[RMDB]
RNA sequence: GGGAACGACUCGAGUAGAGUCGAAAAGGGAGAUCCGAGCAGAGGCAUAGCGAACUGCGCACGGUGAAGCCUUGAGGGAACGCCGUAGGACCCGGGUUCGAUUCCCGGCAGCUCCACCGAAGGGCCACGUGCUGGACUACUUCGGUAGUCCAGCACGAAAAGAAACAACAACAACAAC
Reactivity to DMS in 0.01 (KOAc 150mM, MgCl2 10mM, bicine 150mM(pH8.5), 24C), signal-to-noise 1, nucleotides 027 to 126: g000g000g000a040g030a110u050c080c010g000a060g030c000a010g000a190g000g030c060a070u070a230g000c020g010a090a170c020u030g020c000g080c090a150c000g000g010u000g000a250a050g020c040c000u040u030g000a300g000g000g020a030a050c150g020c000c000g000u000a110g020g000a110c230c070c040g000g000g030u020u000c180g020a300u000u010c000c000c000g060g010c290a220g000c050u000c020c010a100c050c000g030a090a050g000g000g000c060c010a040
Reactivity to 2A3 in 0.01 (KOAc 150mM, MgCl2 10mM, bicine 150mM(pH8.5), 24C), signal-to-noise 1, nucleotides 027 to 126: g020g010g030a160g000a070u000c100c010g020a020g000c040a000g040a070g080g000c030a100u110a080g000c000g070a070a040c020u030g000c040g000c020a040c010g060g000u000g040a110a040g060c000c020u040u020g040a090g000g070g030a050a040c080g030c000c020g020u030a050g030g040a030c000c000c000g000g000g000u060u160c050g030a070u000u060c000c000c000g020g000c030a030g010c000u000c020c010a050c020c000g020a030a050g050g000g000c000c000a020
About this RNA
Chemical mapping of a 177-nucleotide RNA with DMS and 2A3. The RNA was probed in 150 mM KOAc, 10 mM MgCl2 and 150 mM bicine (pH 8.5) at 24 C. Source: RMDB library OK1LIB, as collected in RNAgym. For 2A3 the reverse transcriptase was SuperScript II with manganese. High DMS reactivity at an A or C suggests that its Watson-Crick edge is free.